[RMDB]
RNA sequence: GGGAACGACUCGAGUAGAGUCGAAAACAACACAUGAUAAUGCAGGCUUUUGGACCAUUGCCUAUGCUAACAUGACAGACGUCUUAGUACAACUUAAUGGUACUAACAUACAGCAGCUGCUUUAUUGCUCACGAAAUCAGUUCGCUGAUUUCGUGAGAAAAGAAACAACAACAACAAC
Reactivity to DMS in 0.01 (KOAc 150mM, MgCl2 10mM, bicine 150mM(pH8.5), 24C), signal-to-noise 1, nucleotides 027 to 126: c070a050a010c260a190c050a030u000g010a030u010a000a010u000g000c030a040g020g040c010u000u020u000u010g000g000a130c100c030a040u030u000g030c070c020u000a070u010g000c020u000a040a120c070a120u050g000a070c020a040g010a100c160g000u000c020u010u010a060g040u000a000c090a050a120c090u000u000a040a050u000g000g020u000a050c020u000a010a090c300a040u020a120c130a050g000c040a030g020c030u000g010c000u000u000u020a120u000u000g000
Reactivity to 2A3 in 0.01 (KOAc 150mM, MgCl2 10mM, bicine 150mM(pH8.5), 24C), signal-to-noise 2, nucleotides 027 to 126: c010a000a010c040a000c000a150u150g010a060u050a120a020u100g040c010a000g020g040c040u060u050u150u110g020g040a070c020c000a070u080u020g000c000c020u040a060u080g010c000u040a070a000c030a170u080g090a080c040a030g180a050c070g020u040c010u010u030a010g020u020a030c060a100a040c080u120u200a100a010u150g050g000u040a080c000u020a040a010c020a050u210a030c050a000g020c000a020g020c020u040g000c000u070u080u060a100u080u110g040